[RMDB]
RNA sequence: GGGAACGACUCGAGUAGAGUCGAAAAUGAGCGCAUGAGUACACUGAUCAUCAGACGGUACGCAGGCCCGAUCUGAUGGCGCCAUAUGAUCGUGAUCGGCCCGGUACUCGAUCGAUCAGCGCCGCAGACCCGGUAUUGUCUUCGGACAAUACCGGGUAAAAGAAACAACAACAACAAC
Reactivity to DMS in 0.01 (KOAc 150mM, MgCl2 10mM, bicine 150mM(pH8.5), 24C), signal-to-noise 1, nucleotides 027 to 126: u010g020a120g010c060g000c060a120u030g000a080g010u010a050c110a110c120u000g020a070u000c010a030u010c090a200g000a170c210g020g000u000a060c010g020c010a110g010g010c180c030c000g030a080u000c010u020g010a050u000g040g000c080g030c040c150a060u000a090u000g010a020u000c020g020u000g000a100u010c010g010g000c100c030c020g000g010u000a030c040u000c100g000a040u000c050g030a040u000c050a060g010c080g020c060c030g030c090a100g020
About this RNA:
Source: RMDB library OK2TRN, as collected in RNAgym. The record gives the reactivity of an RNA of 177 nucleotides to DMS. For DMS the reverse transcriptase was MarathonRT. Conditions: 150 mM KOAc, 10 mM MgCl2 and 150 mM bicine (pH 8.5), 24 C. Reactivities are rounded to 0.1 and cut off at 0 and 3.